[RMDB]
RNA sequence: GGGAACGACUCGAGUAGAGUCGAAAACACAGGAACCACACGGAGUUUCCUCCGGGGAAACACCAACGUGUUUUACCCUGGAGGCCCAAUCCCCUUCUAGCCUAGAUAAAAACAGAUUAGGAUUGGACAACUCACUCAGUUGUCCGCUCGACUAGCGCUUCCGUAAAUAGUUCGCUAUUUACGGAAGAAAAGAAACAACAACAACAAC
Reactivity to 2A3 in 0.01 (KOAc 150mM, MgCl2 10mM, bicine 150mM(pH8.5), 24C), signal-to-noise 5, nucleotides 027 to 156: c060a000c030a020g090g030a070a090c070c020a030c060a010c180g060g000a090g020u040u140u030c000c000u000c000c000g010g000g010g020a020a010a000c020a010c050c150a230a130c220g010u030g030u030u070u060u200a170c000c000c000u010g000g000a000g000g010c000c010c000a000a010u010c010c000c010c000u040u030c040u080a030g020c030c010u060a060g050a140u220a140a120a030a040a030c040a020g080a110u070u150a070g030g030a020u050u100g010g000a010c010a010a010c010u070c090a090c060u260c080a030g000u000u000g000u000c010c000g000c000u050c030g070a100c030u020a010g020c010g000
Reactivity to DMS in 0.01 (KOAc 150mM, MgCl2 10mM, bicine 150mM(pH8.5), 24C), signal-to-noise 2, nucleotides 027 to 156: c070a200c010a150g000g000a170a280c000c070a090c040a140c070g000g020a190g000u000u010u000c020c010u020c000c060g000g020g000g030a150a020a020c000a070c020c080a160a160c300g000u010g020u020u000u010u000a090c030c050c000u000g020g000a020g010g010c120c000c040a040a090u010c000c030c010c030u000u010c000u000a070g030c030c040u000a100g010a190u010a050a070a120a080a130c030a070g000a090u000u010a050g010g020a100u000u000g020g030a050c020a070a030c020u020c050a070c230u010c020a060g020u010u000g000u000c020c000g000c060u000c020g010a100c030u000a110g000c120g000

This 207-nucleotide RNA was probed chemically with 2A3 and DMS. Conditions: 150 mM KOAc, 10 mM MgCl2 and 150 mM bicine (pH 8.5), 24 C. The data come from the RNA Mapping Database (RMDB), library VIROID.